[RMDB]
RNA sequence: GGGAACGACUCGAGUAGAGUCGAAAAGUCCAUCCCCACUCCCAGAGGGUCGCCCAGGAAUGGCGGGACCCCACUCAGCAGGGUCCGCGUUCCAUCCUUUCUUACCUGAUGGCCGGCAUGGUCCCAGCUGGAUAUAUCUGUUCGCAGAUAUAUCCAGAAAAGAAACAACAACAACAAC
Reactivity to DMS in 0.01 (KOAc 150mM, MgCl2 10mM, bicine 150mM(pH8.5), 24C), signal-to-noise 3, nucleotides 027 to 126: g010u000c050c030a100u000c060c010c010c020a180c070u000c050c010c020a130g020a190g010g000g010u000c100g020c020c020c030a100g010g010a060a010u000g020g010c040g000g000g000a020c000c030c010c050a070c100u020c140a080g000c100a200g000g000g000u010c010c010g000c000g000u010u000c000c010a100u010c050c040u000u000u000c040u010u010a060c070c030u000g010a130u010g030g010c060c060g010g000c110a060u000g000g010u000c010c040c010a150g000
Reactivity to 2A3 in 0.01 (KOAc 150mM, MgCl2 10mM, bicine 150mM(pH8.5), 24C), signal-to-noise 2, nucleotides 027 to 126: g010u030c030c000a070u040c000c020c000c000a040c010u000c010c000c000a020g040a080g040g000g000u040c020g020c000c020c020a000g040g100a070a070u090g300g300c080g020g060g000a020c000c000c010c000a050c030u300c050a070g020c030a030g010g000g010u010c010c010g060c010g010u040u000c010c000a020u030c000c000u030u070u050c020u050u030a080c030c000u010g030a080u080g030g050c030c010g060g010c060a060u110g000g010u050c010c010c000a000g010